[RMDB]
RNA sequence: GGGAACGACUCGAGUAGAGUCGAAAAAUUAAUCUGAUUUCAGUCAAGACCUCAGUCCACAAGCAACCAUCUGUCAGCCCUGCCAGGAUGCUGCUGGGCAAAGGAUACAUCUCGGGAUUUGCGCCAUAUUUGUACGUUUAGGUCAUAAUUGCCUGGACAGCAAAAUAGUGUUCGCACUAUUUUGCUGAAAAGAAACAACAACAACAAC
Reactivity to DMS in 0.01 (KOAc 150mM, MgCl2 10mM, bicine 150mM(pH8.5), 24C), signal-to-noise 1, nucleotides 027 to 156: a190u010u000a090a110u010c050u000g020a250u020u000u010c040a070g010u000c080a130a070g020a100c040c030u000c070a210g000u020c030c010a150c050a110a060g020c020a040a110c080c010a000u000c060u000g050u000c080a220g010c020c080c020u010g000c120c030a120g020g000a170u010g020c010u000g000c030u010g000g030g020c030a010a060a170g020g020a150u000a060c040a000u000c050u040c060g000g000g020a130u000u000u020g010c060g040c020c070a140u020a120u010u000u000g010u000a100c150g000u000u000u000a080g020g000u000c020a130u000a080a070u040u020g010c000c010u010g040g000a300
Reactivity to 2A3 in 0.01 (KOAc 150mM, MgCl2 10mM, bicine 150mM(pH8.5), 24C), signal-to-noise 3, nucleotides 027 to 156: a000u130u120a070a070u090c070u060g060a100u110u070u030c030a010g030u040c030a030a080g010a110c010c000u020c020a030g040u040c070c010a030c030a070a060g030c020a060a070c010c040a030u000c020u050g080u170c070a030g040c030c000c010u070g060c050c010a020g050g020a040u130g080c060u010g000c000u020g010g000g000c000a080a050a020g000g000a040u070a100c020a140u060c090u090c060g140g000g000a080u040u090u100g050c040g000c000c040a040u060a090u130u140u120g050u060a030c040g020u010u060u120a010g000g000u020c020a020u120a200a140u080u040g010c010c020u010g020g010a000